RNA sequence: GGGAACGACUCGAGUAGAGUCGAAAACACUUCGGGAAACUAUUGCGCAAAUUAAGAAAAAUACCCAAUGCGGUUAUCAUUUUUUUCUCCACCCUCCGCCUCUUUUUUCCGCUUAGUUUUUGGAUUAGAGUAUACUGACUUUCGAGUCAGUAUACUCAAAAGAAACAACAACAACAAC
Reactivity to DMS in 0.01 (KOAc 150mM, MgCl2 10mM, bicine 150mM(pH8.5), 24C), signal-to-noise 1, nucleotides 027 to 126: c120a170c040u010u050c090g010g000g010a140a110a060c030u010a020u030u000g000c080g010c100a020a090a070u000u050a050a080g020a050a110a090a060a070u030a090c020c040c010a130a100u000g010c080g040g010u020u010a050u060c090a000u000u000u080u000u040u000u000c020u000c000c000a010c050c020c040u010c000c020g010c060c080u010c000u000u010u000u000u000u000c050c000g000c080u020u020a020g020u000u050u020u010u020g020g060a120u020u000a090
Reactivity to 2A3 in 0.01 (KOAc 150mM, MgCl2 10mM, bicine 150mM(pH8.5), 24C), signal-to-noise 4, nucleotides 027 to 126: c050a020c020u130u110c060g020g020g070a050a060a040c050u090a100u160u260g000c050g000c040a020a110a170u160u110a180a070g060a060a140a030a020a030u120a060c010c010c060a080a080u150g020c140g010g070u060u160a070u080c050a050u040u030u030u020u050u140u050c020u020c010c000a040c010c030c000u020c010c010g010c000c000u040c070u050u080u040u040u050u010c020c000g030c050u040u000a040g040u060u020u020u050u030g080g020a060u030u180a080